[RMDB]
RNA sequence: GGGAACGACUCGAGUAGAGUCGAAAAACGCAAACUACGCACUCGCAGCUUAAUAACCUGCGCUGAGCCCUUCUCCCCCAGCUUGCCUGUGUCCUAGGGAAUUGGAAGGUCAUCCUUCACAGGAUCGUCUAGGUAAUCCCUUUCGAGGGAUUACCAACGAAGUUGAGAAGUUCGCUUCUCAACUUCGAAAAGAAACAACAACAACAAC
Reactivity to DMS in 0.01 (KOAc 150mM, MgCl2 10mM, bicine 150mM(pH8.5), 24C), signal-to-noise 1, nucleotides 027 to 156: a040c060g000c050a120a060a110c030u000a070c020g020c010a090c090u010c020g000c020a110g030c050u010u050a100a050u000a180a120c240c000u010g000c010g030c050u000g000a100g000c050c020c070u010u000c010u000c030c000c040c050c010a050g000c070u000u030g000c040c000u000g000u010g020u000c040c000u000a120g020g000g020a110a140u000u020g020g000a120a060g010g010u000c070a050u000c020c010u000u010c140a140c050a100g000g010a080u000c070g030u000c050u000a090g020g040u000a010a040u000c000c000c000u000u000u010c240g000a070g020g000g000a030u000u000a010c000c000a030a010
Reactivity to 2A3 in 0.01 (KOAc 150mM, MgCl2 10mM, bicine 150mM(pH8.5), 24C), signal-to-noise 1, nucleotides 027 to 156: a000c070g010c030a100a150a030c070u140a000c070g020c020a040c000u030c020g000c020a000g000c000u010u010a050a010u030a080a030c020c000u010g020c010g050c120u100g050a040g020c030c000c020u070u070c150u090c040c000c000c020c000a010g010c010u080u140g020c000c000u020g000u000g010u040c010c020u010a040g030g000g040a030a080u060u070g080g040a030a010g130g020u100c030a080u100c030c000u020u030c020a030c010a050g000g010a030u070c040g040u030c090u080a040g000g000u000a000a000u000c010c000c000u060u020u020c140g120a020g010g000g010a000u000u000a000c000c000a020a010
An RNA of 207 nucleotides, treated with DMS and 2A3 and read out base by base. It was measured as part of the RMDB library M2RFPK. For 2A3, 875 sequencing reads were counted.